[RMDB]
RNA sequence: GGGAACGACUCGAGUAGAGUCGAAAAGAAAGCCAGAUUCUCGUACUGGCAAGAAACGCAUAAAAGGUGAGGAAUACGAGAAAUCUACAUCAAAAAGCAGAAAAACUGCAAUGCGAAAAGAAAGAAAAUAGCAUGGAGUAUUCGUACUCCAUGCUAUAAAAGAAACAACAACAACAAC
Reactivity to 2A3 in 0.01 (KOAc 150mM, MgCl2 10mM, bicine 150mM(pH8.5), 24C), signal-to-noise 3, nucleotides 027 to 126: g080a050a000a000g010c020c020a000g020a020u050u010c020u000c030g000u020a020c000u000g020g000c000a000a000g000a010a040a000c020g000c020a010u090a100a140a040a020g030g020u080g010a050g050g110a060a120u100a060c000g000a000g000a010a040a010u030c010u110a130c020a010u070c080a060a160a110a060a020g000c010a000g110a060a260a050a000a040c000u000g000c000a000a060u020g000c010g090a100a070a000a000g120a020a090a020g100a010a150a020
Reactivity to DMS in 0.01 (KOAc 150mM, MgCl2 10mM, bicine 150mM(pH8.5), 24C), signal-to-noise 3, nucleotides 027 to 126: g040a130a090a100g010c010c010a000g010a060u010u000c000u010c000g000u000a060c000u000g000g010c000a090a070g030a090a070a080c040g000c020a040u010a130a130a220a110g010g010u000g020a300g000g020a060a220u000a010c010g000a010g000a020a110a070u000c020u010a110c050a080u000c060a010a070a050a120a120g020c020a000g000a100a120a100a120a130c020u000g000c010a160a030u000g020c070g000a120a040a050a150g010a070a090a080g000a050a040a010
Annotation
The record gives the reactivity of an RNA of 177 nucleotides to 2A3 and DMS. It was measured as part of the RMDB library OK1LIB. For DMS the reverse transcriptase was MarathonRT. Reactivities are given for positions 27 through 126.